[RMDB]
RNA sequence: GGGAACGACUCGAGUAGAGUCGAAAACGAUCUGUUCGCAGAUCGAGCUACGGAGACGUAGCGAAGCGCGCGAGUGCCCGGGCGCGCGCCCUACCGGAAAUAAAACCAUAUCCACGUGUGCUAGGAUAUGGCCGGGCACAAAGAAACAGCACACGAACACCACUAUCACUUUCGAGUGAUAGUGGUGAAAAGAAACAACAACAACAAC
Reactivity to 2A3 in 0.01 (KOAc 150mM, MgCl2 10mM, bicine 150mM(pH8.5), 24C), signal-to-noise 1, nucleotides 027 to 156: c010g000a000u000c000u010g070u080u150c300g000c150a000g010a000u000c000g030a070g020c000u000a010c000g010g020a130g110a110c020g000u000a000g010c010g010a240a010g000c000g000c000g000c010g000a110g020u000g000c040c010c030g000g000g000c000g030c000g000c000g010c000c000c000u160a070c070c040g210g150a110a060a030u280a060a080a020a030c000c000a000u000a000u020c010c010a070c190g010u030g010u010g010c000u000a000g000g000a000u000a000u000g000g010c000c010g010g000g000c030a000c010a000a020a000g040a000a070a010c080a010g070c030a000c000a000c110g000a010a010